[RMDB]
RNA sequence: GGGAACGACUCGAGUAGAGUCGAAAAGUACUGAGGUUCGCCUCAGUACAAAAGCAGAUCUGAGCCUGCGAGCUCUCUGCCUAACAAGGGAACGCAAUAAAAAAACGUGCAUGUUCGCAUGCACGAAGUCCAAACACAACUUCGGUUGUGUUUGGACAAAAGAAACAACAACAACAAC
Reactivity to DMS in 0.01 (KOAc 150mM, MgCl2 10mM, bicine 150mM(pH8.5), 24C), signal-to-noise 1, nucleotides 027 to 126: g030u000a010c000u020g030a030g010g020u000u000c190g070c000c000u000c000a030g000u010a000c000a000a060a170a090g000c000a020g000a050u000c160u000g030a040g000c010c050u030g090c250g000a120g000c000u000c000u010c000u000g020c000c030u000a040a080c170a130a090g000g000g010a040a030c120g020c110a070a070u050a030a000a050a080a150a060a110c000g020u000g000c000a000u000g000u000u050c130g010c000a000u010g000c000a000c020g000a020a010
Reactivity to 2A3 in 0.01 (KOAc 150mM, MgCl2 10mM, bicine 150mM(pH8.5), 24C), signal-to-noise 1, nucleotides 027 to 126: g000u000a010c000u000g020a000g050g030u040u050c180g110c030c010u000c010a000g000u000a000c000a000a010a000a000g020c000a000g000a050u080c160u230g010a010g000c020c020u220g070c050g100a050g010c010u010c010u030c000u030g000c000c000u050a060a040c040a080a090g120g030g010a040a070c090g030c120a070a100u210a250a130a010a000a000a010a020c000g000u000g000c010a000u000g030u020u020c180g000c060a000u010g000c000a000c010g000a010a000